[RMDB]
RNA sequence: GGGAACGACUCGAGUAGAGUCGAAAAACGCACACGCGUGCUUGUAGAUCUGGCCCUUGCCGAAACCGUGGUUGUCGCACAUCUUGGGCGCGGCGUCGGCGAUCCCGGCAGGCGCGAGCGCCACACCGCCUGCCCUAGAAUUCGUUCUAGGGCAGGCAAAAGAAACAACAACAACAAC
Reactivity to DMS in 0.01 (KOAc 150mM, MgCl2 10mM, bicine 150mM(pH8.5), 24C), signal-to-noise 1, nucleotides 027 to 126: a150c090g030c030a030c220a130c220g000c050g030u000g020c080u010u000g010u000a110g000a120u000c030u010g000g010c030c060c030u000u010g010c100c030g030a080a050a070c060c040g020u000g000g000u000u000g000u020c060g070c130a030c150a100u000c110u000u000g000g000g030c060g000c000g000g020c030g010u000c020g040g040c000g000a120u000c000c000c010g030g010c000a060g000g010c010g010c050g010a080g020c010g000c000c000a050c130a020c140c150
Chemical mapping of a 177-nucleotide RNA with DMS. The data come from the RNA Mapping Database (RMDB), library OK2TST. The reactions ran in a buffer of 150 mM KOAc, 10 mM MgCl2 and 150 mM bicine (pH 8.5), at 24 C. For DMS the reverse transcriptase was MarathonRT. For DMS, 917 sequencing reads were counted.